[RMDB]
RNA sequence: GGGAACGACUCGAGUAGAGUCGAAAAGCUAAUGGAGUACUGAUUGCUAAAUCAAGGGAGAUGAGGAGAGCAAAAGUUGAGGUGCUAAGCGCCGAUGAAAGCUUUAGGGCUCCUCCUGUCAAGAUAACGCAUGCUGUAUGUUCGCAUACAGCAUGCGAAAAGAAACAACAACAACAAC
Reactivity to DMS in 0.01 (KOAc 150mM, MgCl2 10mM, bicine 150mM(pH8.5), 24C), signal-to-noise 2, nucleotides 027 to 126: g060c010u010a070a020u050g000g000a210g000u000a080c140u030g000a070u000u000g020c120u040a020a040a040u000c020a030a280g000g010g000a030g000a080u050g010a000g040g000a000g000a010g010c070a140a010a020a010g000u000u000g030a060g000g050u020g000c010u010a130a300g030c010g040c000c000g000a090u050g000a150a120a010g000c000u000u000u000a160g080g000g000c000u000c040c000u000c000c000u070g010u000c050a000a160g000a020u000a130a240
Reactivity to 2A3 in 0.01 (KOAc 150mM, MgCl2 10mM, bicine 150mM(pH8.5), 24C), signal-to-noise 2, nucleotides 027 to 126: g040c000u100a110a030u130g070g010a140g130u160a030c040u010g040a040u010u160g040c080u190a200a130a020u060c070a110a240g000g090g000a070g010a070u190g050a020g000g020a030g000a000g020c030a000a000a000a050g010u020u070g050a030g000g020u050g000c100u100a150a030g030c070g000c010c020g010a090u090g030a020a010a000g010c010u080u010u000a060g000g260g000c000u000c020c010u000c020c000u190g010u000c030a130a070g070a160u110a140a000
Annotation:
The data come from the RNA Mapping Database (RMDB), library OK1LIB. Chemical mapping of a 177-nucleotide RNA with DMS and 2A3. DMS adducts were read by reverse transcription with MarathonRT. The reactions ran in a buffer of 150 mM KOAc, 10 mM MgCl2 and 150 mM bicine (pH 8.5), at 24 C. The DMS profile rests on 1,745 reads.